[RMDB]
RNA sequence: GGGAACGACUCGAGUAGAGUCGAAAAGAAAAGAGCGUAAUCGCGUCUUGACGUGAGUGAGCCUAGACUGUAGCCUAUCCCAAGUGGGAUAGCAUACCUCACAAUACGCUGAUCUACAGUCAAAAGACGCCCAUAAUCGUUUCGACGAUUAUGGGCGAAAAGAAACAACAACAACAAC
Reactivity to 2A3 in 0.01 (KOAc 150mM, MgCl2 10mM, bicine 150mM(pH8.5), 24C), signal-to-noise 2, nucleotides 027 to 126: g160a000a090a000a000g010a000g000c000g030u040a100a020u060c020g000c000g010u010c040u070u120g150a040c020g000u010g010a040g000u040g000a000g030c000c060u040a020g000a020c000u000g000u020a000g050c010c000u000a000u020c000c000c010a090a140g230u300g020g000g000a000u000a000g000c000a050u080a090c000c000u010c000a000c000a000a020u030a000c010g000c030u020g000a020u000c000u000a000c000a000g000u000c000a020a060a020a060g120a010
Reactivity to DMS in 0.01 (KOAc 150mM, MgCl2 10mM, bicine 150mM(pH8.5), 24C), signal-to-noise 2, nucleotides 027 to 126: g000a120a040a030a000g010a000g000c000g000u000a000a300u040c030g000c000g000u000c080u010u060g000a000c020g000u050g000a000g050u000g010a070g000c190c290u000a100g000a000c000u000g000u000a020g000c300c000u000a000u000c000c000c000a300a140g100u000g000g000g000a000u000a000g000c300a000u000a000c030c140u000c060a000c000a200a260u000a000c010g010c000u010g020a150u000c000u000a050c040a000g000u000c040a020a120a080a140g000a300